RNA sequence: GGGAACGACUCGAGUAGAGUCGAAAAGCCGUUAGCACUUGAUAUUUGAGAGUAGUUGAUACCUUUUGUCUCUUGAAGGCCUUUGUAUCUACUACUUUAGGCCUUUUAUAUCUUGUGCUUUCGGCGAGGGUUGGCGCUGCUUCGGCGGCGCUGGCCCAAAAGAAACAACAACAACAAC
Reactivity to 2A3 in 0.01 (KOAc 150mM, MgCl2 10mM, bicine 150mM(pH8.5), 24C), signal-to-noise 9, nucleotides 027 to 126: g000c000c000g000u000u000a000g000c000a000c000u000u010g000a000u010a020u050u130u120g050a040g000a000g020u050a010g010u020u090g050a050u080a100c030c040u050u120u120u190g070u030c010u010c010u050u220g110a130a010g010g000c010c010u040u030u030g010u000a010u030c050u060a040c020u010a000c010u070u030u060a050g030g050c010c000u020u050u040u030a010u000a000u000c000u000u010g000u000g000c000u000u000u000c000g000g000c000g000a070
Reactivity to DMS in 0.01 (KOAc 150mM, MgCl2 10mM, bicine 150mM(pH8.5), 24C), signal-to-noise 5, nucleotides 027 to 126: g000c000c000g010u000u000a000g020c010a000c010u000u000g010a010u000a010u010u030u020g000a030g000a040g020u010a050g000u010u010g000a120u030a050c260c090u010u010u010u040g000u000c000u000c020u020u020g010a050a020g000g000c000c300u000u010u000g010u000a010u030c140u020a090c140u000a010c000u020u000u010a020g000g010c070c020u000u010u000u020a010u000a000u000c010u000u000g000u000g010c000u000u000u000c000g020g010c000g000a040
This 177-nucleotide RNA was probed chemically with 2A3 and DMS. The data come from the RNA Mapping Database (RMDB), library OK1LIB. Reactivities are given for positions 27 through 126.